[RMDB]
An RNA of 207 nucleotides, treated with 2A3 and read out base by base. The RNA was probed in 150 mM KOAc, 10 mM MgCl2 and 150 mM bicine (pH 8.5) at 24 C. For 2A3 the reverse transcriptase was SuperScript II with manganese.
RNA sequence: GGGAACGACUCGAGUAGAGUCGAAAAAAACAUACUACGGUUUAAUCGUAGAUGAAUGUGAUGAAAUGUUUGUGGAUGAAAGUGGGAAAGGAAUUCAUUUGUACUCAUACGCAUCCAUUGGAAUUAAAGGUUUACAAGAAGUUGAUGCAACAGUACAGACCAAUUAGGUCUUCGGACCUAAUUGGUCAAAAGAAACAACAACAACAAC
Reactivity to 2A3 in 0.01 (KOAc 150mM, MgCl2 10mM, bicine 150mM(pH8.5), 24C), signal-to-noise 2, nucleotides 027 to 156: a020a000a000c070a080u220a080c030u010a010c000g100g050u060u150u180a060a090u210c000g000u000a000g010a010u060g080a070a080u050g020u060g010a060u060g030a070a070a080u110g060u070u100u040g000u080g060g010a030u000g050a020a060a100g040u080g040g020g000a040a030a010g060g010a060a040u140u020c040a100u120u100u100g000u000a010c030u010c050a030u040a140c130g000c000a000u000c000c000a030u000u110g000g030a050a000u000u110a150a010a120g110g030u040u070u070a150c010a040a030g060a090a000g050u140u130g040a030u000g000c020a030a030c010a090g000u000a030c010a010